[RMDB]
RNA sequence: GGGAACGACUCGAGUAGAGUCGAAAAUACGCAUUGGGUGGCCACACGUGAGGGCGCCAAGGAACCAGCCACGGCAGCGGCCGCGGUCCGAAAGUGGACAAAACGCAAGGGUCGGAUCUACAGCGACCCACGGGAUGAAAUUCGUUUCAUCCCGUGGAAAAGAAACAACAACAACAAC
Reactivity to DMS in 0.01 (KOAc 150mM, MgCl2 10mM, bicine 150mM(pH8.5), 24C), signal-to-noise 5, nucleotides 027 to 126: u030a100c080g020c060a100u010u000g010g000g010u000g030g000c010c030a060c060a120c060g020u020g020a130g030g010g000c050g010c050c040a070a190g020g000a110a100c020c050a150g000c010c010a080c090g010g000c050a100g010c070g030g020c030c030g000c090g000g010u020c000c010g050a060a070a120g020u030g000g000a050c060a070a070a090a080c080g000c070a080a090g000g000g000u000c010g020g010a070u020c050u020a090c140a110g000c040g000a050c050
Reactivity to 2A3 in 0.01 (KOAc 150mM, MgCl2 10mM, bicine 150mM(pH8.5), 24C), signal-to-noise 6, nucleotides 027 to 126: u160a010c050g000c060a060u080u150g080g000g020u040g080g000c010c010a040c010a010c090g100u100g070a180g040g010g040c030g000c000c010a010a050g080g000a040a070c020c020a020g020c000c010a050c040g050g000c020a040g070c020g050g000c010c010g020c040g010g010u030c000c000g080a150a140a010g110u160g040g010a020c030a040a100a020a000c060g040c050a060a090g030g000g000u020c020g030g030a060u030c020u090a100c040a090g030c020g040a050c010